[RMDB]
RNA sequence: GGGAACGACUCGAGUAGAGUCGAAAACUAUCAAAAGUCAAAACAUUAGCUGGGCAUGGUGGCAUGCACCUGUAAUCCCAGCUACUCAGGAGGCUGCAGUGGGAGGAUAGCUUGAGCCUUAGAGUUUGAGGCUGCAGUGAGCUGUGAUUUUGCUACAGCUCACUGGAUGAUUCGUCAUCCAGUGAGCAAAAGAAACAACAACAACAAC
Reactivity to 2A3 in 0.01 (KOAc 150mM, MgCl2 10mM, bicine 150mM(pH8.5), 24C), signal-to-noise 6, nucleotides 027 to 156: c030u050a070u250c080a040a070a070a030g080u060c020a040a040a090a110c060a140u090u080a010g000c000u010g000g000g010c040a090u080g020g020u030g050g120c140a100u220g060c000a040c010c010u030g060u120a040a060u050c000c000c000a010g000c010u010a000c000u010c020a020g070g020a020g050g000c010u030g010c050a020g010u070g020g060g020a040g030g020a060u040a080g020c020u030u080g030a010g010c000c000u040u100a080g010a020g060u040u070u090g030a020g020g000c010u020g010c020a030g020u020g090a020g010c020u010g020u040g100a150u010u080u110u110g030c020u050a030c020a030
Reactivity to DMS in 0.01 (KOAc 150mM, MgCl2 10mM, bicine 150mM(pH8.5), 24C), signal-to-noise 3, nucleotides 027 to 156: c040u000a120u010c080a080a080a090a150g020u000c040a080a110a080a150c100a130u000u000a040g010c000u010g000g000g030c170a110u010g020g020u000g010g030c200a120u000g020c030a020c010c000u000g010u000a090a100u010c010c000c000a020g000c000u000a000c060u000c070a110g020g020a130g010g020c020u010g010c040a040g010u000g020g020g030a070g000g010a120u000a060g000c020u000u000g000a070g000c020c000u000u000a110g010a130g010u000u000u010g010a030g010g030c000u010g020c050a050g010u000g000a060g020c020u000g020u000g000a150u000u000u000u010g020c010u010a110c070a200